[RMDB]
RNA sequence: GGGAACGACUCGAGUAGAGUCGAAAACAAGUCCCUUUCCCCAUGGGGACUUUGGUGUGCAAUGGUUGCAAACAGCAGCCUCCUUGGUAGUGUAUGUAGCCUAUUGUCUAUAUGGGUUACCUCAAGGGCUAUAAAAAUCUUUCGAGAUUUUUAUAGCAAAAGAAACAACAACAACAAC
Reactivity to 2A3 in 0.01 (KOAc 150mM, MgCl2 10mM, bicine 150mM(pH8.5), 24C), signal-to-noise 9, nucleotides 027 to 126: c030a010a010g000u010c010c000c000u020u040u040c020c010c000c010a060u080g000g000g010g020a000c000u050u030u030g090g010u100g040u050g020c070a100a140u130g020g000u010u010g000c030a160a200a140c060a170g010c000a020g010c000c000u020c010c000u030u020g070g020u090a120g050u050g060u130a130u120g010u010a020g010c000c000u020a040u040u120g160u150c120u130a100u010a010u150g010g020g000u000u010a010c000c010u040c020a010a020g030g020
Reactivity to DMS in 0.01 (KOAc 150mM, MgCl2 10mM, bicine 150mM(pH8.5), 24C), signal-to-noise 4, nucleotides 027 to 126: c090a050a020g000u000c000c000c000u000u010u020c040c010c010c050a150u030g000g000g000g000a010c010u010u010u010g000g010u010g010u010g000c110a100a060u010g000g020u000u000g010c020a110a100a110c160a170g010c040a050g000c000c010u000c040c010u010u000g010g000u030a040g000u020g010u020a040u010g000u000a010g010c020c020u000a040u010u010g000u040c170u020a050u030a020u000g000g000g000u000u000a010c010c060u010c030a030a040g010g010